This 177-nucleotide RNA was probed chemically with DMS and 2A3. In probing experiments dimethyl sulfate is read out at A N1 and C N3, which are open when not base-paired. 2A3 adducts were read by reverse transcription with SuperScript II with manganese. The RNA was probed in 150 mM KOAc, 10 mM MgCl2 and 150 mM bicine (pH 8.5) at 24 C.
[RMDB]
RNA sequence: GGGAACGACUCGAGUAGAGUCGAAAAGAAUAAAUAGUGUCUUGGAGCGCGCGGCGUAAACAUAUAUGGUUCAUAUAUGUCCGUAGGCACGUAAAGAAAGCGCGUCUAAGCGAGAGAAGACUCGCAACCUCCAUUAGGGUUUCGACCCUAAUGGAGGAAAAGAAACAACAACAACAAC
Reactivity to DMS in 0.01 (KOAc 150mM, MgCl2 10mM, bicine 150mM(pH8.5), 24C), signal-to-noise 2, nucleotides 027 to 126: g010a100a080u120a050a080a080u010a050g000u010g000u000c000u000u050g000g020a120g000c000g070c000g000c000g030g000c300g000u000a140a080a000c000a000u000a000u000a000u000g000g030u000u020c020a000u000a000u000a000u010g000u010c080c010g000u010a090g020g060c040a020c000g000u040a080a040a080g000a040a050a040g010c010g000c000g000u000c050u050a160a160g040c020g010a020g000a030g000a170a090g010a010c000u000c000g000c000a110a090
Reactivity to 2A3 in 0.01 (KOAc 150mM, MgCl2 10mM, bicine 150mM(pH8.5), 24C), signal-to-noise 4, nucleotides 027 to 126: g070a040a030u200a160a040a040u170a070g000u010g010u020c050u030u190g210g050a080g000c000g000c000g000c000g020g030c020g030u060a030a040a040c010a000u020a000u000a010u010g280g250u270u280c040a000u010a020u000a000u000g000u020c040c000g000u020a010g000g000c020a000c010g020u010a000a050a140g080a050a070a020g000c000g000c000g000u010c030u070a060a020g000c030g000a020g000a010g030a160a030g030a010c000u010c000g000c000a030a140